[RMDB]
RNA sequence: GGGAACGACUCGAGUAGAGUCGAAAAGAUUCGUUCGCGAAUCAAAAAGAUAUGGAUCCAGGAGGUAAGAUUAGCAGUAUACUCGGAAACGAGUACUACUGCGACGAUCUUACUCCCCACCCUGGAUCCUAAGUCAAAAAACCGCGUUCGCGCGGAACUUUUUGUUAAUGUUCGCAUUAACAAAAAGAAAAGAAACAACAACAACAAC
Reactivity to DMS in 0.01 (KOAc 150mM, MgCl2 10mM, bicine 150mM(pH8.5), 24C), signal-to-noise 1, nucleotides 027 to 156: g000a070u000u000c000g050u000u030c270g110c010g000a000a030u000c000a130a030a080a180a100g000a150u000a280u010g000g020a000u020c000c000a060g000g000a200g000g010u000a000a030g000a050u000u000a240g000c000a020g010u000a060u000a000c000u000c010g000g030a070a190a280c000g010a040g000u000a000c030u000a020c030u010g010c000g010a010c130g000a030u000c000u000u000a020c000u000c040c080c000c100a180c140c010c000u030g020g000a000u000c000c010u000a000a060g010u010c010a000a130a050a100a140a140c020c000g060c000g020u000u000c300g020c040g000c000g030g000a030a030
Reactivity to 2A3 in 0.01 (KOAc 150mM, MgCl2 10mM, bicine 150mM(pH8.5), 24C), signal-to-noise 3, nucleotides 027 to 156: g010a010u030u010c020g010u050u130c300g000c030g110a000a030u050c060a050a030a080a050a000g100a030u160a030u170g000g000a010u000c000c000a000g000g000a010g000g020u010a000a000g010a000u010u050a030g000c010a000g010u000a010u000a000c010u000c000g020g040a050a070a070c010g010a000g000u000a010c070u000a000c010u000g000c010g000a000c010g020a010u000c000u000u000a000c020u030c010c000c010c010a010c000c000c000u000g010g000a000u000c000c000u000a000a000g010u020c030a050a060a030a100a150a160c000c250g000c010g030u010u030c250g010c020g000c000g060g020a090a070